[RMDB]
RNA sequence: GGGAACGACUCGAGUAGAGUCGAAAAGAUAUGGAACUGUCAAGUUGGGAGUGCGCUGAACUGUAAGCAUCGGAAACGAUGCACAGAUACGAAUAAGCACGAGGAUCAACUUGACAGUUCCUAAGUCCUUAACGCAUAGGUUCGCCUAUGCGUUAAGAAAAGAAACAACAACAACAAC
Reactivity to 2A3 in 0.01 (KOAc 150mM, MgCl2 10mM, bicine 150mM(pH8.5), 24C), signal-to-noise 3, nucleotides 027 to 126: g030a000u140a010u300g000g000a000a030c000u000g000u020c010a000a000g000u000u010g010g000g030a060g030u030g000c060g040c280u170g080a250a080c000u020g040u110a230a040g000c000a000u010c020g010g000a060a050a040c010g010a010u020g050c010a010c000a000g030a020u280a200c150g070a250a220u300a300a040g000c010a010c010g030a300g030g000a030u040c000a000a000c010u000u010g000a000c000a000g000u010u000c000c000u010a000a000g000u010c000
Reactivity to DMS in 0.01 (KOAc 150mM, MgCl2 10mM, bicine 150mM(pH8.5), 24C), signal-to-noise 4, nucleotides 027 to 126: g000a090u000a300u000g000g010a020a000c010u000g010u000c000a000a010g020u000u000g000g000g010a090g030u000g040c000g030c180u020g020a110a180c000u000g010u000a120a090g030c000a010u010c000g000g000a130a080a290c020g010a010u000g000c010a030c000a010g000a130u030a100c280g000a090a170u000a100a240g010c000a000c010g000a110g020g000a090u010c010a000a010c010u000u000g000a010c000a000g000u000u000c000c000u000a020a090g010u000c030